[RMDB]
RNA sequence: GGGAACGACUCGAGUAGAGUCGAAAAUAGCCCCUGAUAGGAAUGCUGGGGUUGAGCAAGAGGAAGAGUGAGUGAUUAGAAGAAAGAAGGCAGGAACCGAGUUUCUUUUCCUCCUGCCUUGAGUGCAUACCAUUUCGGCAUUCGUGCCGAAAUGGUAAAAAGAAACAACAACAACAAC
Reactivity to DMS in 0.01 (KOAc 150mM, MgCl2 10mM, bicine 150mM(pH8.5), 24C), signal-to-noise 2, nucleotides 027 to 126: u010a170g000c030c000c000c080u000g000a090u000a070g030g010a080a030u010g010c060u010g000g020g010g020u000u010g010a060g000c130a060a050g000a140g030g010a040a030g000a030g020u000g000a060g020u000g010a100u000u000a130g000a100a070g010a110a060a150g000a030a030g000g010c000a010g000g000a070a140c180c160g000a050g000u000u020u000c080u000u000u020u000c070c030u000c010c020u000g010c000c000u000u000g010a050g000u020g000c120a160

Structure probing data (DMS) for a 177-nucleotide construct. The reactions ran in a buffer of 150 mM KOAc, 10 mM MgCl2 and 150 mM bicine (pH 8.5), at 24 C. For DMS, 1,268 sequencing reads were counted. It was measured as part of the RMDB library OK2TST.